[RMDB]
RNA sequence: GGGAACGACUCGAGUAGAGUCGAAAAGAUAUGGAAUGAAGUACGCGAUAAGCUGCAAUCGGAAACGAUUGGCAGCUUUUGACGCGUACCAUUCCUAAGUCAAAAGAUGAGAGUUCGCUCUCAUCAACUAAACAGCCUAGUUCGCUAGGCUGUUUAGAAAAGAAACAACAACAACAAC
Reactivity to DMS in 0.01 (KOAc 150mM, MgCl2 10mM, bicine 150mM(pH8.5), 24C), signal-to-noise 5, nucleotides 027 to 126: g000a010u000a170u010g000g000a010a010u010g010a170a210g020u000a000c010g030c000g020a140u020a020a020g010c000u000g000c000a010a000u000c000g020g000a040a030a040c000g000a020u000u000g020g030c000a010g010c000u000u000u000u000g020a220c090g030c010g000u000a000c000c000a000u000u000c000c000u000a010a090g000u000c010a120a090a130a160g000a010u000g000a020g000a020g030u000u010c300g020c000u000c000u000c000a000u000c010a070a190
Reactivity to 2A3 in 0.01 (KOAc 150mM, MgCl2 10mM, bicine 150mM(pH8.5), 24C), signal-to-noise 2, nucleotides 027 to 126: g000a000u000a010u080g000g040a030a010u010g020a300a140g010u010a010c000g030c020g110a240u040a300a000g000c000u030g000c010a000a010u000c000g010g000a070a000a000c010g020a010u010u030g190g000c000a000g000c000u000u000u000u020g030a000c010g040c000g000u000a000c000c000a000u000u000c000c000u000a060a010g020u020c010a000a030a030a280g000a000u010g010a000g020a000g010u150u200c300g050c100u010c000u000c000a000u000c000a010a010